[RMDB]
RNA sequence: GGGAACGACUCGAGUAGAGUCGAAAAGAUAUGGAGGAUGUAUCAGUAGACCCAUGGACAUGCGUGGGACUCGGAAACGAGUCCUCACGCAACAGCCAUCGGGUCUACUGAUACAUCCUCCUAAGUCGAUAAUGAUCCAGUUCGCUGGAUCAUUAUCAAAAGAAACAACAACAACAAC
Reactivity to DMS in 0.01 (KOAc 150mM, MgCl2 10mM, bicine 150mM(pH8.5), 24C), signal-to-noise 2, nucleotides 027 to 126: g000a090u010a300u000g000g000a020g010g010a000u000g010u000a020u010c000a000g020u000a010g000a030c010c000c020a040u010g010g010a050c080a210u000g000c000g040u010g010g000g000a010c010u000c010g000g000a080a110a210c000g010a030g000u000c000c000u040c020a010c000g020c010a020a030c260a160g010c010c000a010u000c240g030g010g020u000c000u000a000c000u000g020a000u000a000c000a010u000c000c000u010c000c000u000a000a030g010u010c100

Description:
The record gives the reactivity of an RNA of 177 nucleotides to DMS. Reactivities are given for positions 27 through 126. The DMS profile rests on 2,637 reads. DMS adducts were read by reverse transcription with MarathonRT.